[RMDB]
RNA sequence: GGGAACGACUCGAGUAGAGUCGAAAACCUCUAAAAUGCGCGCAUACUUAAUGAUUGGUAAUUCCUUACUGGUUAAGAGUUUCGGACUUAAGUAUGAUGUUGUGUUUGCAUAUUGUUUGGGAAACCACCUCAAUAAGUUCUUCGGAACUUAUUGAGGAAAAGAAACAACAACAACAAC
Reactivity to 2A3 in 0.01 (KOAc 150mM, MgCl2 10mM, bicine 150mM(pH8.5), 24C), signal-to-noise 2, nucleotides 027 to 126: c000c010u000c010u040a010a020a030a030u030g030c030g000c010g000c000a000u010a020c020u020u010a040a040u160g140a180u120u130g090g010u090a030a030u010u030c010c010u020u000a020c040u210g180g070u170u020a000a000g020a000g010u010u010u030c020g050g040a020c030u010u000a000a000g000u010a030u070g110a210u100g070u290u150g030u020g000u000u040u090g000c040a030u090a110u250u140g160u030u120u170g020g020g040a020a030a040c020c000a020
Reactivity to DMS in 0.01 (KOAc 150mM, MgCl2 10mM, bicine 150mM(pH8.5), 24C), signal-to-noise 3, nucleotides 027 to 126: c010c010u010c200u020a050a030a030a010u000g000c010g010c020g000c010a000u000a010c000u010u000a000a000u010g010a300u000u010g000g010u000a020a010u000u010c180c030u010u000a030c060u010g010g010u020u000a010a030g000a050g010u000u000u000c020g020g010a220c100u000u000a010a010g010u000a000u000g010a060u000g020u010u020g060u010g000u000u010u000g000c200a080u000a100u000u010g010u000u000u000g010g010g000a100a110a180c060c080a170
Chemical mapping of a 177-nucleotide RNA with 2A3 and DMS.
In probing experiments dimethyl sulfate is read out at A N1 and C N3, which are open when not base-paired.
For DMS, 2,844 sequencing reads were counted.
The 2A3 profile rests on 957 reads.
Conditions: 150 mM KOAc, 10 mM MgCl2 and 150 mM bicine (pH 8.5), 24 C.
It was measured as part of the RMDB library RFMREP.
DMS adducts were read by reverse transcription with MarathonRT.